[RMDB]
RNA sequence: GGGAACGACUCGAGUAGAGUCGAAAAUAGUAAAAUCUUCAUGUACAAAUUCCUGUACCUGAACGAAGAGUUAAGGCAACAGUCGUGGUCUCAUUGGGACUUUGGGGAAAACGUACAGGUUCUAGCUUGUCAGAGUAUCAGCUCAGAUAUGUAUGUGCUCAUCUAAGAGCUUCGGCUCUUAGAUGAGAAAAGAAACAACAACAACAAC
Reactivity to 2A3 in 0.01 (KOAc 150mM, MgCl2 10mM, bicine 150mM(pH8.5), 24C), signal-to-noise 1, nucleotides 027 to 156: u120a010g060u070a030a050a120a180u100c040u040u020c030a020u030g010u010a030c000a000a180a180u240u090c090c000u040g000u010a000c000c040u010g030a070a030c080g020a100a010g110a010g030u130u150a060a030g040g000c020a080a030c030a090g040u050c040g030u040g030g070u060c000u020c040a130u020u150g000g000g000a030c000u050u040u080g000g000g000g000a130a060a060a060c060g040u080a020c030a060g000g020u090u010c000u040a010g000c000u070u160g070u120c080a070g000a010g220u040a080u110c020a020g000c010u010c040a010g060a060u090a010u110g050u050a060u040g030u010g040